[RMDB]
Description:
Chemical mapping of a 177-nucleotide RNA with DMS and 2A3. The data come from the RNA Mapping Database (RMDB), library OK1LIB. The RNA was probed in 150 mM KOAc, 10 mM MgCl2 and 150 mM bicine (pH 8.5) at 24 C.

RNA sequence: GGGAACGACUCGAGUAGAGUCGAAAACGUAAUACAGUGAGUGGACGGAAGAAAUCCCCUUCCCACCUCCCCACUGUCCACUCACUGUCUUCCUAAUAGGAAAUAUAAAUCGGGGGUGGGAAGGGGAAAUAGUGCACCGAUUCGUCGGUGCACUAUUAAAAGAAACAACAACAACAAC
Reactivity to DMS in 0.01 (KOAc 150mM, MgCl2 10mM, bicine 150mM(pH8.5), 24C), signal-to-noise 1, nucleotides 027 to 126: c270g060u000a120a140u040a050c010a000g070u000g020a010g010u000g020g000a010c000g070g000a070a050g000a050a220a030u010c020c000c040c000u000u000c000c000c000a040c000c000u000c010c000c170c060a020c120u010g000u040c000c000a000c000u020c000a000c010u000g000u000c140u020u000c000c000u010a070a070u040a120g010g020a060a040a080u120a060u060a090a130a120u000c190g080g020g000g030g010u010g000g000g030a000a000g040g000g010g000a070
Reactivity to 2A3 in 0.01 (KOAc 150mM, MgCl2 10mM, bicine 150mM(pH8.5), 24C), signal-to-noise 4, nucleotides 027 to 126: c060g020u090a020a070u220a210c000a000g000u000g000a000g000u010g000g020a000c050g010g050a070a010g090a070a160a090u150c000c000c000c000u020u000c010c000c000a010c020c000u070c060c070c000c060a050c010u040g010u000c010c000a000c000u010c010a000c000u010g010u040c000u000u010c010c000u060a140a060u080a120g140g090a020a080a010u220a030u050a070a120a050u200c100g000g010g000g010g000u010g000g010g000a000a000g010g000g000g010a000